[RMDB]
RNA sequence: GGGAACGACUCGAGUAGAGUCGAAAAAAAUUACCCACAUGGAGUCAGCAGAAAAUGAGAAAGUAGAGCUCGUGCUGCGAAUAAUUCCAGCAAGUGCCAAGGGGCUAGUUGAGGAAUGGCUUCAUGAAAUCUUCCAGGAAUUCGUUCCUGGAAGAUUAAAAGAAACAACAACAACAAC
Reactivity to 2A3 in 0.01 (KOAc 150mM, MgCl2 10mM, bicine 150mM(pH8.5), 24C), signal-to-noise 6, nucleotides 027 to 126: a000a000a000u170u070a130c010c000c010a020c010a000u000g000g000a000g010u010c000a000g050c020a010g060a100a170a060a030u040g020a040g030a070a180a010g150u200a080g050a040g090c010u000c010g010u070g040c000u000g000c000g010a020a060u210a050a030u060u000c000c010a010g020c020a060a070g070u060g110c040c040a200a180g250g060g050g040c020u040a030g080u040u080g040a050g040g030a010a030u020g000g000c000u000u000c010a000u010g010a010
Reactivity to DMS in 0.01 (KOAc 150mM, MgCl2 10mM, bicine 150mM(pH8.5), 24C), signal-to-noise 5, nucleotides 027 to 126: a040a040a070u020u020a110c010c000c010a280c020a010u000g000g010a010g010u000c010a110g020c040a030g000a050a030a060a010u000g010a020g000a070a060a100g010u020a160g000a180g010c040u000c000g020u010g000c010u000g000c030g020a080a100u030a070a070u000u010c010c000a060g000c030a050a050g020u010g000c020c020a180a130g020g000g000g010c020u010a080g010u000u020g000a180g000g010a030a050u000g000g010c000u000u000c000a010u000g000a050